[RMDB]
RNA sequence: GGGAACGACUCGAGUAGAGUCGAAAAAGUACCACGGGUACCCGAGCGGUGUCUGACGCGCCACUACCGAACCGAGAAGGUGUAGCAGCCCACUGCUUAACCUGCGAAGCGAACACACCAGGAAAAAUCAUCGGUGGUGCUUCGGUACCACUGAUGAAAAAGAAACAACAACAACAAC
Reactivity to DMS in 0.01 (KOAc 150mM, MgCl2 10mM, bicine 150mM(pH8.5), 24C), signal-to-noise 9, nucleotides 027 to 126: a070g010u010a090c020c010a140c140g010g000g020u010a050c030c020c030g000a110g000c070g000g020u010g000u020c030u010g010a110c080g000c050g000c030c020a070c060u020a080c030c040g010a070a090c060c030g000a110g020a090a060g010g000u000g000u000a060g000c030a050g010c080c070c100a090c050u000g010c020u000u010a150a030c040c000u000g000c050g000a100a080g000c050g000a080a060c080a040c050a070c030c030a080g000g000a020a050a060a080a120
Reactivity to 2A3 in 0.01 (KOAc 150mM, MgCl2 10mM, bicine 150mM(pH8.5), 24C), signal-to-noise 9, nucleotides 027 to 126: a000g090u060a040c010c040a060c070g060g000g010u060a050c000c020c040g030a040g030c070g020g030u040g030u060c040u030g040a050c030g010c020g020c030c010a040c030u070a060c020c030g070a070a040c020c020g030a040g030a180a040g030g010u040g020u050a020g000c010a010g000c020c030c010a170c030u030g010c000u060u050a040a020c000c000u010g010c040g040a060a020g030c030g030a080a010c050a000c000a030c040c030a030g090g020a040a090a010a010a050